An RNA of 177 nucleotides, treated with DMS and read out base by base. For DMS, 1,234 sequencing reads were counted.

[RMDB]
RNA sequence: GGGAACGACUCGAGUAGAGUCGAAAAGCCACGGGAUCGCUCGGCAAGUGGGGCGCAGCUGCAGCUGCAGCCGGCGCGGCCGUCGCUGCCGCUGUCGGCGUCGGCGUCGCCAAGAGCGUCAAGAGCGGCGUAUUGCCUCUUUCGAGAGGCAAUACGCAAAAGAAACAACAACAACAAC
Reactivity to DMS in 0.01 (KOAc 150mM, MgCl2 10mM, bicine 150mM(pH8.5), 24C), signal-to-noise 1, nucleotides 027 to 126: g000c010c020a110c090g000g040g000a120u050c000g030c010u020c020g000g030c050a120a180g000u030g020g000g000g030c010g060c030a160g000c000u000g020c020a040g000c050u000g000c030a040g040c000c000g010g030c000g040c160g000g020c090c010g010u010c210g010c040u000g000c010c090g010c060u010g020u010c040g000g030c000g010u020c170g000g000c000g060u010c030g000c000c020a060a180g000a170g000c010g010u000c020a030a070g010a050g020c010g000
The reactions ran in a buffer of 150 mM KOAc, 10 mM MgCl2 and 150 mM bicine (pH 8.5), at 24 C. Values cover nucleotides 27 to 126. DMS adducts were read by reverse transcription with MarathonRT.